[RMDB]
RNA sequence: GGGAACGACUCGAGUAGAGUCGAAAAUCCUAAGUCGGUGUGGAGCAACGACGAUCGCUCUUGUCAGUCGGAAACGACUUGGAUUUAGAGCGGGAGUUGCUUCAGCACACCGAUAUGGAAAAACAGGGCUUACUUCGUUCGCGAAGUAAGCCCUGAAUCACACAUCAUGGUUCGCCAUGAUGUGUGAAAAAGAAACAACAACAACAAC
Reactivity to DMS in 0.01 (KOAc 150mM, MgCl2 10mM, bicine 150mM(pH8.5), 24C), signal-to-noise 1, nucleotides 027 to 156: u000c000c010u010a070a140g010u000c000g020g060u010g060u000g000g010a140g030c020a030a030c010g010a160c070g010a300u010c060g050c000u000c010u020u000g010u000c020a080g000u040c010g040g010a250a150a300c010g040a020c010u010u020g020g030a030u000u000u000a010g000a040g010c000g000g000g000a300g010u000u000g020c000u010u010c060a130g010c060a040c010a070c040c010g010a040u000a130u000g000g010a070a070a120a150a190c000a070g040g000g010c000u010u000a020c000u000u000c000g010u000u000c300g040c030g020a000a020g000u000a000a080g040c000c010c000u000g000a010a100
Reactivity to 2A3 in 0.01 (KOAc 150mM, MgCl2 10mM, bicine 150mM(pH8.5), 24C), signal-to-noise 1, nucleotides 027 to 156: u020c000c000u060a110a020g020u000c000g000g000u000g020u010g010g090a000g020c010a000a000c000g300a010c000g000a060u010c000g000c000u000c020u030u020g010u000c010a010g000u000c000g000g080a050a150a110c000g000a000c010u040u090g090g000a000u090u240u200a000g000a000g010c040g020g000g000a010g000u020u010g000c000u070u040c020a010g000c000a010c000a000c010c000g000a000u000a090u020g010g000a020a100a050a000a000c000a000g050g000g010c000u010u010a000c020u000u000c020g040u080u030c220g040c030g130a040a000g000u000a010a000g000c000c000c000u000g000a000a000